RNA sequence: GGGAACGACUCGAGUAGAGUCGAAAAUCAACGAUUCGUCGUUGAAAAAAAGGGGUCACGAGAGGGACAUGCACCAACUGAAGCCUCCACGGUUGAAGUGCAACAGCCUCCCCACCUCGUGACGGAGGCACCCAAAAAACACCGAUUCGUCGGUGAACACGUCUACAGUCUUCGGACUGUAGACGUGAAAAGAAACAACAACAACAAC
Reactivity to 2A3 in 0.01 (KOAc 150mM, MgCl2 10mM, bicine 150mM(pH8.5), 24C), signal-to-noise 1, nucleotides 027 to 156: u020c000a000a000c000g010a020u090u070c220g080u030c040g040u030u070g020a120a030a000a000a000a000a000g230g010g000g010u000c000a000c000g010a000g010a010g060g020g080a080c110a200u070g010c010a010c000c000a000a000c000u020g030a090a030g010c010c000u000c000c000a000c000g010g010u000u020g060a300a070g000u020g030c000a090a070c000a110g180c040c110u140c030c000c000c020a110c040c010u000c010g010u000g000a000c010g000g000a010g010g030c000a010c000c000c000a060a040a020a010a010a010c000a000c000c000g010a010u060u070c160g070u040c000g130g020u020g020a020a010